[RMDB]
RNA sequence: GGGAACGACUCGAGUAGAGUCGAAAAUUCCUUCUGGAACCAAGCGGUUGGUUCCGAGGGGGGUGUGACUCAGGUACCGCCGUAGAAACUGAGUUACGACGUCUACCCGGGAUUCAAACCCGGUCCCCUCCAGAAGUGAAUUCUGGAUGAAGAGUCUCAAUUAUGAAUUCUUCGGAAUUCAUAAUUGAAAAGAAACAACAACAACAAC
Reactivity to 2A3 in 0.01 (KOAc 150mM, MgCl2 10mM, bicine 150mM(pH8.5), 24C), signal-to-noise 2, nucleotides 027 to 156: u040u020c000c000u000u010c080u220g000g000a000a000c000c000a000a000g080c030g150g040u060u050g020g050u000u000c000c000g010a030g000g020g010g010g040g000u040g000u000g020a000c000u000c000a000g020g010u040a010c010c040g050c050c000g140u170a100g050a130a300a020c010u010g020a010g040u000u000a030c010g030a000c010g060u020c030u120a070c040c020c000g000g000g000a060u270u220c160a170a100a160c000c000c010g010g000u050c000c000c000c000u000c000c000a020g000a050a000g020u200g120a070a060u020u040c040u030g040g040a040u040g090a110a050g020a050g100u020c020u000
An RNA of 207 nucleotides, treated with 2A3 and read out base by base. For 2A3 the reverse transcriptase was SuperScript II with manganese. For 2A3, 818 sequencing reads were counted.